[RMDB]
RNA sequence: GGGAACGACUCGAGUAGAGUCGAAAAUGAUUGAGCGUAGCACACACUCAGACUGUACGACAGUCUGACACACAGCUACGCUAGUGCAUCGUGUGUGUGAUAUCGAUGUAGCACGAAAAUGAAGUAAUAAACGCUCUACUUUCGAGUAGAGCGUUUAAAAAGAAACAACAACAACAAC
Reactivity to DMS in 0.01 (KOAc 150mM, MgCl2 10mM, bicine 150mM(pH8.5), 24C), signal-to-noise 3, nucleotides 027 to 126: u000g020a140u000u000g010a000g000c000g010u010a010g000c000a060c160a160c080a070c150u000c000a020g020a000c000u000g020u010a140c300g020a230c000a000g010u000c000u030g000a010c040a060c070a120c230a070g010c000u000a010c000g010c000u000a010g020u000g000c020a040u000c000g000u000g020u010g050u010g020u010g020a110u000a040u000c000g000a050u000g020u010a110g020c050a070c020g010a040a030a070a070u000g010a110a090g000u000a070a090
Reactivity to 2A3 in 0.01 (KOAc 150mM, MgCl2 10mM, bicine 150mM(pH8.5), 24C), signal-to-noise 1, nucleotides 027 to 126: u200g040a100u160u120g040a000g000c000g000u010a000g000c030a050c000a000c000a000c160u010c000a000g000a000c000u030g040u160a150c110g170a030c190a000g000u000c000u000g000a000c010a000c010a000c000a010g000c010u000a010c000g030c000u000a000g010u020g020c000a040u020c010g000u040g010u010g020u000g050u040g130a100u070a030u270c060g020a030u060g070u090a050g130c060a020c130g070a020a070a000a050u260g030a160a090g100u150a010a130

Chemical mapping of a 177-nucleotide RNA with DMS and 2A3. The reactions ran in a buffer of 150 mM KOAc, 10 mM MgCl2 and 150 mM bicine (pH 8.5), at 24 C. DMS adducts were read by reverse transcription with MarathonRT. For 2A3, 874 sequencing reads were counted. The data come from the RNA Mapping Database (RMDB), library M2PK90.